[RMDB]
RNA sequence: GGGAACGACUCGAGUAGAGUCGAAAAGAUGUGCAGCAACGCCAUUCCUGGUGCUUCGUAAAUACCACGGCUUUUAGCUUCAAUAAUACGGUUUUCAAUUUGGUCGCUCAUGCCCAAACCAUGACGGUCUUUAGCUUGCUUUCGAGCAAGCUAAAGAAAAAGAAACAACAACAACAAC
Reactivity to DMS in 0.01 (KOAc 150mM, MgCl2 10mM, bicine 150mM(pH8.5), 24C), signal-to-noise 2, nucleotides 027 to 126: g000a090u010g000u000g020c010a060g020c220a090a110c150g000c000c000a090u000u000c040c020u010g010g020u010g030c060u000u000c010g000u000a020a090a030u000a080c060c040a130c150g010g010c010u000u000u000u000a080g000c010u000u010c060a060a080u000a110a090u000a060c090g000g020u000u020u000u000c100a080a130u000u010u000g020g020u010c050g000c180u020c020a030u000g000c080c010c130a040a130a090c300c010a040u000g050a080c110g000g010
Reactivity to 2A3 in 0.01 (KOAc 150mM, MgCl2 10mM, bicine 150mM(pH8.5), 24C), signal-to-noise 1, nucleotides 027 to 126: g000a010u040g060u040g060c060a060g040c010a010a090c010g000c010c010a010u040u070c020c000u030g060g000u040g000c020u000u070c020g050u030a010a040a030u130a080c010c010a020c030g070g030c040u090u140u090u300a010g020c010u040u030c020a000a110u140a130a020u080a060c060g010g060u080u010u050u050c010a070a100u000u110u140g020g010u010c030g000c050u020c030a060u070g000c030c030c030a040a060a060c030c090a000u170g000a010c070g000g000